[RMDB]
RNA sequence: GGGAACGACUCGAGUAGAGUCGAAAACUACAUAGUUUCGACUAUGUAGAAACCAUUAGGAAGCAUGCUGAUGCAUAUGGACGAGGGCAACUAACCUAUUGCGAACAGCAGGUUUCGACCUGCUGAAGAAGCAAUUAUCUUUCGAGAUAAUUGCUUCAAAAGAAACAACAACAACAAC
Reactivity to DMS in 0.01 (KOAc 150mM, MgCl2 10mM, bicine 150mM(pH8.5), 24C), signal-to-noise 8, nucleotides 027 to 126: c010u000a000c010a000u000a000g020u000u000u010c190g010a060c000u000a000u000g000u000a000g000a090a100a160c030c010a070u010u010a100g020g000a130a080g010c050a040u010g010c050u010g010a110u010g010c040a050u000a060u000g010g020a120c080g010a090g010g000g000c040a030a070c080u000a080a090c060c030u000a090u010u000g010c090g020a080a230c010a000g000c000a010g000g010u000u000u010c200g010a030c000c010u000g000c000u000g000a050a070
Reactivity to 2A3 in 0.01 (KOAc 150mM, MgCl2 10mM, bicine 150mM(pH8.5), 24C), signal-to-noise 8, nucleotides 027 to 126: c000u000a000c000a010u010a000g000u030u040u080c180g050a010c000u000a000u010g000u000a000g000a020a020a000c010c000a040u070u100a050g050g060a090a020g030c060a040u080g000c040u110g080a100u140g010c070a040u060a090u230g050g030a030c050g040a070g000g050g000c010a040a040c030u050a020a050c010c010u060a110u060u200g070c060g060a090a030c000a000g000c010a000g000g000u020u040u080c150g030a020c000c000u000g000c010u020g010a020a020
This 177-nucleotide RNA was probed chemically with DMS and 2A3. DMS adducts were read by reverse transcription with MarathonRT. For 2A3 the reverse transcriptase was SuperScript II with manganese. The data come from the RNA Mapping Database (RMDB), library M2PK50.